[RMDB]
RNA sequence: GGGAACGACUCGAGUAGAGUCGAAAACUGCGGAGUGACUGUGUGGUGGCGUGGUUACGCUUGAAGUCUUUCGUUGUCAGGCGUAGAACGGUGUACACCAGACCGAAAGAUCUGAAGUCAUUCCAGAGCGUCUGCCGGGCUUCGGCUUGGUGGGCGCAAAAGAAACAACAACAACAAC
Reactivity to DMS in 0.01 (KOAc 150mM, MgCl2 10mM, bicine 150mM(pH8.5), 24C), signal-to-noise 9, nucleotides 027 to 126: c020u000g010c120g000g000a020g030u000g000a010c010u010g020u010g020u010g010g010u010g000g010c010g010u010g000g020u020u020a010c010g010c000u000u000g000a060a080g010u030c110u010u020u030c170g010u030u060g010u000c000a010g000g010c020g010u000a010g010a090a070c060g010g010u010g010u030a140c010a020c010c010a030g000a010c020c010g010a090a060a080g000a070u010c020u000g000a090a030g010u000c000a010u000u000c000c000a080g010a170
Reactivity to 2A3 in 0.01 (KOAc 150mM, MgCl2 10mM, bicine 150mM(pH8.5), 24C), signal-to-noise 9, nucleotides 027 to 126: c040u080g020c040g030g000a010g000u000g000a000c000u010g010u020g020u050g160g040u050g040g080c010g010u050g020g240u180u080a010c000g010c000u010u030g030a060a030g060u070c000u060u220u130c130g090u090u150g060u020c010a010g010g000c000g000u010a010g020a100a020c050g040g070u070g020u040a020c000a000c010c000a000g010a010c010c020g080a070a060a020g040a080u030c020u070g060a060a010g000u000c000a000u000u000c000c000a020g030a010
This 177-nucleotide RNA was probed chemically with DMS and 2A3.
High DMS reactivity at an A or C suggests that its Watson-Crick edge is free.
The 2A3 profile rests on 125,140 reads.
High 2A3 reactivity points to a flexible backbone, as in loops and unpaired stretches.
The reactions ran in a buffer of 150 mM KOAc, 10 mM MgCl2 and 150 mM bicine (pH 8.5), at 24 C.